An RNA of 207 nucleotides, treated with 2A3 and read out base by base. The reactions ran in a buffer of 150 mM KOAc, 10 mM MgCl2 and 150 mM bicine (pH 8.5), at 24 C. 2A3 adducts were read by reverse transcription with SuperScript II with manganese. Reactivities are given for positions 27 through 156.
RNA sequence: GGGAACGACUCGAGUAGAGUCGAAAAGCGUACUACAAGUCGUGGCCACUAUCGACGAAGACGUAUCUCUAGCGUGAGAACUCCCAAAUAGGAGUUCUUCGGGUACGUCAGAGAUAGUGGAAUCGACUUGUAUCGCAAACGCAGGUUCGCCUGCGAAGCACGGUUACUACUUCGGUAGUAACCGUGCAAAAGAAACAACAACAACAAC
Reactivity to 2A3 in 0.01 (KOAc 150mM, MgCl2 10mM, bicine 150mM(pH8.5), 24C), signal-to-noise 3, nucleotides 027 to 156: g020c010g060u110a030c050u000a000c010a000a000g000u010c000g040u110g210g070c000c000a000c010u000a000u000c040g300a300c050g020a280a040g000a000c000g010u000a030u030c130u010c080u140a110g130c040g140u230g090a000g000a010a000c000u050c000c020c020a180a190a030u300a150g020g000a010g000u000u000c000u020u020c030g010g000g000u010a010c000g000u000c010a000g000a000g000a000u000a000g000u000g000g000a000a060u000c000g000a000c000u000u010g000u000a010u060c000g000c000a060a020a000c020g020c000a000g000g000u050u080c130g180c050c000u000g000c020g010a050a000